[RMDB]
The data come from the RNA Mapping Database (RMDB), library OK1LIB. This 177-nucleotide RNA was probed chemically with 2A3 and DMS. DMS adducts were read by reverse transcription with MarathonRT. The reactions ran in a buffer of 150 mM KOAc, 10 mM MgCl2 and 150 mM bicine (pH 8.5), at 24 C.

RNA sequence: GGGAACGACUCGAGUAGAGUCGAAAAGAGCGUAUCGCCUGGGAAUGUGGUGAAACCCUUGUGGGCACCACCCAUCGCUGCAGUUUGCGAUGGUCCCAACUCGGUUUCAGCUGCUACCUCCACCGUGGCCUACUGGUAAUUUCGAUUACCAGUAGGCAAAAGAAACAACAACAACAAC
Reactivity to 2A3 in 0.01 (KOAc 150mM, MgCl2 10mM, bicine 150mM(pH8.5), 24C), signal-to-noise 9, nucleotides 027 to 126: g040a010g020c030g010u070a040u120c050g030c050c030u040g020g000g030a120a180u100g010u020g020g020u040g040a140a090a110c010c020c030u100u300g120u300g040g010g040c000a000c000c000a010c010c000c000a000u000c000g000c010u100g050c040a200g090u190u260u100g010c000g000a010u000g000g030u030c000c010c000a020a050c030u050c030g030g000u020u100u060c040a040g000c000u040g010c010u060a080c000c000u030c010c010a070c010c030g070u100g100
Reactivity to DMS in 0.01 (KOAc 150mM, MgCl2 10mM, bicine 150mM(pH8.5), 24C), signal-to-noise 3, nucleotides 027 to 126: g000a080g020c000g000u010a040u010c050g080c260c090u000g000g030g000a030a140u020g000u000g000g030u000g000a140a040a050c000c000c010u040u040g020u040g010g000g020c080a020c050c010a020c010c000c010a010u000c020g010c000u010g000c150a110g010u030u010u020g000c000g020a010u010g000g000u000c000c000c010a060a070c070u010c040g020g010u000u040u010c060a100g030c050u000g000c020u010a070c020c000u000c030c020a120c030c020g020u040g000